[RMDB]
RNA sequence: GGGAACGACUCGAGUAGAGUCGAAAAAAAAAAAGAUAUGGAGUGGAAUCCUUGGAUUUAUAGGCCGAGUUACUCGGAAACGAGUAAUAGUGCCUAUUGUCAGGUGGCCACUCCUAAGUCAAAAAAAGACAUAUGUAUAGUUCGCUAUACAUAUGUCAAAAGAAACAACAACAACAAC
Reactivity to 2A3 in 0.01 (KOAc 150mM, MgCl2 10mM, bicine 150mM(pH8.5), 24C), signal-to-noise 2, nucleotides 027 to 126: a020a010a000a000a010a050a080g060a000u100a000u110g000g000a010g020u020g010g010a060a080u090c020c030u040u060g060g000a010u030u300u170a020u040a030g030g000c010c010g080a100g300u020u000a000c000u000c010g010g000a030a070a030c010g000a010g030u010a010a000u020a010g180u260g010c000c000u000a000u020u010g000u010c010a000g010g050u040g140g140c010c000a010c000u000c000c000u000a040a000g010u020c000a030a030a000a030a050a100a160
Reactivity to DMS in 0.01 (KOAc 150mM, MgCl2 10mM, bicine 150mM(pH8.5), 24C), signal-to-noise 2, nucleotides 027 to 126: a000a010a070a090a040a100a090g010a030u010a260u000g020g010a030g020u000g000g000a140a040u010c050c030u000u000g020g000a010u000u000u000a010u000a000g010g000c010c010g010a140g000u000u000a000c010u010c000g000g000a060a050a130c000g010a010g000u000a010a000u000a100g010u000g010c000c000u000a000u000u000g000u000c020a030g010g010u000g000g000c010c010a010c000u000c010c000u000a020a060g000u010c020a000a000a090a090a060a110a100